[RMDB]
This 177-nucleotide RNA was probed chemically with 2A3 and DMS.
Source: RMDB library M2PK50, as collected in RNAgym.
RNA sequence: GGGAACGACUCGAGUAGAGUCGAAAACGGUCGAAAUUCGUUUCGACCGAAUAUGCUAGCUGAGCACAGCUGCAAAGCUAAGCUGAAAGCCAGCUGCAAGCGCGAGUUCGGCGUUCGCGCCGAACAAGCACAGUCAGCAAUUCGUUGCUGACUGUGCAAAAGAAACAACAACAACAAC
Reactivity to 2A3 in 0.01 (KOAc 150mM, MgCl2 10mM, bicine 150mM(pH8.5), 24C), signal-to-noise 3, nucleotides 027 to 126: c000g010g000u010c010g000a020a000a020u140u080c150g060u030u010u000c000g000a000c000c010g000a000a030u120a040u040g010c070u080a020g000c000u010g000a030g040c000a000c020a240g000c010u030g010c070a120a020a050g060c030u070a120a000g000c010u010g040a160a020a010g010c000c000a000g010c010u010g000c050a050a040g070c050g020c050g100a110g090u000u000c010g010g000c000g040u020u070c180g010c000g010c030c000g000a000a000c000a000a010
Reactivity to DMS in 0.01 (KOAc 150mM, MgCl2 10mM, bicine 150mM(pH8.5), 24C), signal-to-noise 3, nucleotides 027 to 126: c010g010g000u000c000g000a010a010a030u000u010c170g020u000u000u000c000g000a010c000c000g010a030a040u010a050u000g020c000u010a030g010c000u000g000a140g010c010a140c080a030g010c010u000g020c150a080a140a090g020c140u010a140a130g000c010u000g000a070a080a040g010c000c020a010g000c000u000g010c060a040a090g010c160g030c080g000a180g000u000u000c000g000g010c010g030u000u000c180g010c030g030c000c000g000a010a000c020a040a140
Overview:
2A3 adducts were read by reverse transcription with SuperScript II with manganese.